[RMDB]
RNA sequence: GGGAACGACUCGAGUAGAGUCGAAAAAGCAACAUAGUGAGACCACCAUCUCUACACAAAUUUAAAAUUAGCCAGGUGUGGUGGCAGGCACCUGUAGUCCCAGCUACUCUGGAGGCUGAGGCUGGAGCACAUGCUCGAAGUUCGCUUCGAGCAUGUGAAAAGAAACAACAACAACAAC
Reactivity to 2A3 in 0.01 (KOAc 150mM, MgCl2 10mM, bicine 150mM(pH8.5), 24C), signal-to-noise 1, nucleotides 027 to 126: a000g070c080a040a000c010a050u100a080g040u010g030a060g030a030c000c010a040c030c000a010u000c000u000c030u140a020c090a000c010a060a160a060u120u280u240a160a180a140a160u090u060a020g060c070c040a030g070g000u020g000u040g060g050u000g030g040c070a030g000g000c010a040c000c000u080g060u080a030g010u000c000c030c000a010g000c010u010a090c020u090c030u130g040g120a100g080g030c070u090g060a020g100g000c010u000g030g030a040g030
Reactivity to DMS in 0.01 (KOAc 150mM, MgCl2 10mM, bicine 150mM(pH8.5), 24C), signal-to-noise 1, nucleotides 027 to 126: a100g000c100a070a030c030a060u000a060g020u000g010a020g000a080c030c010a110c060c010a140u000c030u000c030u010a040c130a110c150a040a060a090u000u010u000a090a050a070a040u000u000a060g000c210c040a020g000g010u000g010u000g020g000u000g010g000c090a020g010g020c040a000c030c040u000g000u000a030g000u000c030c000c000a040g010c030u010a070c070u000c050u000g000g000a130g030g000c030u010g020a030g020g010c000u000g010g010a120g020
About this RNA: An RNA of 177 nucleotides, treated with 2A3 and DMS and read out base by base. The RNA was probed in 150 mM KOAc, 10 mM MgCl2 and 150 mM bicine (pH 8.5) at 24 C. For DMS, 1,108 sequencing reads were counted. 2A3 adducts were read by reverse transcription with SuperScript II with manganese. For DMS the reverse transcriptase was MarathonRT. Reactivities are given for positions 27 through 126.